Record summary: The data come from the RNA Mapping Database (RMDB), library M2RFOK. Structure probing data (2A3) for a 207-nucleotide construct.
RNA sequence: GGGAACGACUCGAGUAGAGUCGAAAAAACGUUGCAUGAUCGUAAAACAUGCCCGGCUUACCGUGAGCCGCCUUUGAAAGAAAGGUUUACACGGACUCUGCUGCGUUACGCACGUACCUAACUUGUGAAAACGGCAUCUUGUUCGCAAGAUGCCGAAGGCUAGGGAAUACUUCGGUAUUCCCUAGCCAAAAGAAACAACAACAACAAC
Reactivity to 2A3 in 0.01 (KOAc 150mM, MgCl2 10mM, bicine 150mM(pH8.5), 24C), signal-to-noise 2, nucleotides 027 to 156: a000a010c000g000u010u000g010c000a010u000g020a060u150c050g070u230a080a040a000a120c000a000u000g000c000c000c000g010g010c010u030u070a120c010c000g000u000g000a000g020c000c020g050c010c000u060u000u000g060a070a050a000g030a010a020a000g010g000u000u020u000a030c010a010c000g010g010a060c050u130c070u150g040c010u020g010c000g100u150u100a100c220g010c010a000c020g010u040a090c040c030u060a120a180c040u100u080g060u050g260a040a000a010a070c000g000g000c020a000u010c000u040u000g070u080u070c070g000c080a000a000g000a000u000g000c010c010g000a010a010
The reactions ran in a buffer of 150 mM KOAc, 10 mM MgCl2 and 150 mM bicine (pH 8.5), at 24 C. For 2A3, 1,167 sequencing reads were counted. For 2A3 the reverse transcriptase was SuperScript II with manganese.